Source: RMDB library OK1LIB, as collected in RNAgym.
Structure probing data (2A3) for a 177-nucleotide construct.
The 2A3 profile rests on 385 reads.
The reactions ran in a buffer of 150 mM KOAc, 10 mM MgCl2 and 150 mM bicine (pH 8.5), at 24 C.
[RMDB]
RNA sequence: GGGAACGACUCGAGUAGAGUCGAAAACAAGUUCGUAACCGCGAGUCUCGACGCCGAAGCGCGGAUCGUCGCCAAGGCGCUUGAUCUCGUCGAGCGGCACGGGGGUGUGAUAGCCGACAUCGACGUCCAGCGCUGCGAGUUUCGACUCGCAGCGCUGAAAAGAAACAACAACAACAAC
Reactivity to 2A3 in 0.01 (KOAc 150mM, MgCl2 10mM, bicine 150mM(pH8.5), 24C), signal-to-noise 1, nucleotides 027 to 126: c000a000a230g170u060u150c030g000u030a000a110c000c080g000c000g020a040g100u040c010u020c000g000a000c010g080c000c000g020a020a040g000c000g000c000g030g080a290u170c090g110u010c020g000c000c000a160a020g000g000c000g020c080u030u110g020a020u000c110u120c260g020u030c000g000a000g000c070g010g020c120a060c050g000g000g000g000g000u010g000u080g000a080u130a000g020c000c000g000a000c000a170u040c000g050a130c030g020u030c000